[RMDB]
RNA sequence: GGGAACGACUCGAGUAGAGUCGAAAAGAUAUGGAUUGUUGGUAUGCCAACAGCUAUGAUCGGAAACGAUCAUAGACAUGGCAAGCCACUGCAAUCCUAAGUCAAAAGCAGAGCUUCGGCUCUGCAACAGUGUAUUAUCGUUCGCGAUAAUACACUGAAAAGAAACAACAACAACAAC
Reactivity to DMS in 0.01 (KOAc 150mM, MgCl2 10mM, bicine 150mM(pH8.5), 24C), signal-to-noise 9, nucleotides 027 to 126: g000a050u000a300u000g010g000a020u000u000g010u000u000g010g020u000a220u000g020c000c010a030a090c280a180g010c000u000a000u010g000a010u000c000g010g000a120a080a220c010g000a010u000c000a010u000a000g000a030c090a240u000g020g000c020a060a300g000c000c000a030c300u000g000c010a020a010u000c010c000u000a050a100g000u010c050a110a090a140a060g000c010a010g000a010g020c010u000u010c250g040g010c000u000c010u000g020c010a040a070
Reactivity to 2A3 in 0.01 (KOAc 150mM, MgCl2 10mM, bicine 150mM(pH8.5), 24C), signal-to-noise 6, nucleotides 027 to 126: g020a020u080a060u170g010g010a010u000u020g050u050u060g030g000u070a090u230g010c010c020a120a040c100a220g000c000u000a000u000g000a000u000c010g010g000a060a040a030c020g000a000u010c000a000u010a000g010a010c030a070u160g000g000c020a080a070g010c010c000a050c110u110g000c010a010a000u000c000c000u010a140a020g070u050c050a050a050a030a140g000c000a000g010a000g000c010u120u160c300g190g000c000u010c010u000g000c000a000a000